This 177-nucleotide RNA was probed chemically with 2A3 and DMS. DMS adducts were read by reverse transcription with MarathonRT. 2A3 adducts were read by reverse transcription with SuperScript II with manganese. High 2A3 reactivity points to a flexible backbone, as in loops and unpaired stretches. The RNA was probed in 150 mM KOAc, 10 mM MgCl2 and 150 mM bicine (pH 8.5) at 24 C.
[RMDB]
RNA sequence: GGGAACGACUCGAGUAGAGUCGAAAAGUGCGCUAUUUCGAUAGCGCACAAAGGCGGCGAGUCUCGCUCGGCGGCGCGCGACAGCGCGCACCGCAGCCGGAACAUAACGCCACUUCGGUGGCGUUAAGUCCAUUAAAUUAUUCGUAAUUUAAUGGACAAAAGAAACAACAACAACAAC
Reactivity to 2A3 in 0.01 (KOAc 150mM, MgCl2 10mM, bicine 150mM(pH8.5), 24C), signal-to-noise 4, nucleotides 027 to 126: g000u010g000c000g000c000u000a010u030u110u030c070g100a010u000a010g010c000g010c000a000c000a000a000a000g020g010c010g010g010c010g010a020g030u010c030u050c090g010c010u020c020g040g010c020g040g000c010g010c010g010c010g070a070c070a190g210c070g030c010g030c080a020c000c020g020c010a000g010c020c010g060g020a060a030c040a050u070a030a000c010g000c010c000a010c000u030u070c190g100g000u000g000g030c000g010u000u000a000a010
Reactivity to DMS in 0.01 (KOAc 150mM, MgCl2 10mM, bicine 150mM(pH8.5), 24C), signal-to-noise 5, nucleotides 027 to 126: g010u000g010c010g020c000u000a000u000u010u020c180g010a020u000a010g010c000g020c000a000c000a000a050a080g010g010c010g000g000c010g000a050g000u000c040u000c110g000c040u000c030g020g020c010g000g040c040g050c020g040c020g020a170c300a230g010c050g050c010g030c020a020c010c010g010c120a070g010c020c020g000g020a110a100c100a150u000a000a010c000g010c010c000a000c010u000u010c200g020g010u000g000g010c000g000u000u000a010a050